The record gives the reactivity of an RNA of 207 nucleotides to 2A3.
2A3 adducts were read by reverse transcription with SuperScript II with manganese.
The 2A3 profile rests on 992 reads.
[RMDB]
RNA sequence: GGGAACGACUCGAGUAGAGUCGAAAAUGGCUUCGACGCUGGUAGCGAAACCUAAUGAUGCAUGUCAAGAGCGUGUGACUCUUGUAAAUCAACAUACAUUUAAAAUAGUCGCAAACGACGAAACUUACGCACUAGCAGCUUAAGGGCUGCUUAGGACCUGUAUGGGGUCGUUCGCGACCCCAUACAGAAAAGAAACAACAACAACAAC
Reactivity to 2A3 in 0.01 (KOAc 150mM, MgCl2 10mM, bicine 150mM(pH8.5), 24C), signal-to-noise 2, nucleotides 027 to 156: u120g070g000c030u060u040c040g130a160c080g040c190u080g090g190u100a060g060c030g050a090a100a020c030c020u060a060a010u100g090a010u060g010c100a030u080g100u230c000a000a000g000a000g000c040g020u070g030u040g060a090c000u000c000u000u000g090u070a010a040a000u080c010a020a010c000a040u050a010c010a000u000u140u300a130a170a050a070u060a010g010u000c070g020c120a020a060a140c030g020a000c050g020a030a010a000c010u120u180a020c130g030c050a030c030u040a000g030c000a000g040c000u040u040a030a080g060g000g000c000u000g000c000u000u000a000g000g000a040c030